[RMDB]
RNA sequence: GGGAACGACUCGAGUAGAGUCGAAAAACGGGUGUCAUCACGUCAUCGCAAAGGCGGGUGCUGAUCACGCCAGGGAAGGGACCACGCCCGUAACGUAUUGCAGUCUCGACACCACCCGCCCGCAAGUCACUAUCGCUAGGUUCGCCUAGCGAUAGUGAAAAGAAACAACAACAACAAC
Reactivity to DMS in 0.01 (KOAc 150mM, MgCl2 10mM, bicine 150mM(pH8.5), 24C), signal-to-noise 1, nucleotides 027 to 126: a220c070g090g000g000u010g080u000c120a300u000c110a150c070g000u000c040a110u000c150g000c180a010a050a110g000g000c030g000g000g000u000g000c260u000g000a270u000c120a240c030g000c040c220a040g000g090g000a090a130g080g000g010a000c020c000a000c110g000c000c040c040g020u000a050a000c070g000u000a190u040u060g000c000a080g030u000c030u000c000g000a010c070a190c260c000a000c050c010c010g000c010c010c010g000c300a040a150g000u030
Reactivity to 2A3 in 0.01 (KOAc 150mM, MgCl2 10mM, bicine 150mM(pH8.5), 24C), signal-to-noise 8, nucleotides 027 to 126: a000c020g010g000g010u040g040u060c080a100u090c060a070c180g040u010c030a090u100c080g000c030a050a030a010g070g000c010g000g000g010u010g000c160u010g020a040u030c050a040c190g110c070c030a030g070g070g020a080a110g050g000g010a000c000c010a030c030g020c000c010c000g000u030a080a040c050g070u100a140u080u090g010c020a030g070u020c030u060c120g020a020c020a010c010c010a030c010c000c000g060c000c010c000g030c080a070a010g080u020

Description:
Chemical mapping of a 177-nucleotide RNA with DMS and 2A3. The RNA was probed in 150 mM KOAc, 10 mM MgCl2 and 150 mM bicine (pH 8.5) at 24 C. The data come from the RNA Mapping Database (RMDB), library OK1LIB. The 2A3 profile rests on 8,946 reads.